[RMDB]
RNA sequence: GGGAACGACUCGAGUAGAGUCGAAAACCUGGUUUAGGGUUCCAGGCUAGCCCUAUCUAUCGUUCGAGAUGCGAGCGCUUAAGCUCAAAUUGAGUGGCUGAGUUAGUGGUGAACGUAUCCCUAUGUUAAAACGGUAGCUGCUUCGGCAGCUACCGAACCCUCAGACUAUGUUCGCAUAGUCUGAGGGAAAAGAAACAACAACAACAAC
Reactivity to 2A3 in 0.01 (KOAc 150mM, MgCl2 10mM, bicine 150mM(pH8.5), 24C), signal-to-noise 1, nucleotides 027 to 156: c010c040u010g010g020u080u130u020a040g020g000g000u020u070c010c000a010g020g010c090u100a030g020c010c000c020u010a020u050c010u010a040u040c020g040u040u020c020g020a000g000a110u050g000c040g080a000g050c000g000c080u200u300a070a070g020c000u000c000a080a160a060u020u000g000a010g000u070g000g010c020u070g010a000g030u010u000a030g000u090g240g010u020g050a040a020c040g030u030a080u070c010c010c000u030a040u100g060u010u100a040a090a040a010c030g020g000u000a000g030c000u000g000c010u070u030c080g120g000c000a000g000c000u000a030c000c010g000a000a000
The data come from the RNA Mapping Database (RMDB), library M2RFPK. This 207-nucleotide RNA was probed chemically with 2A3. For 2A3, 626 sequencing reads were counted.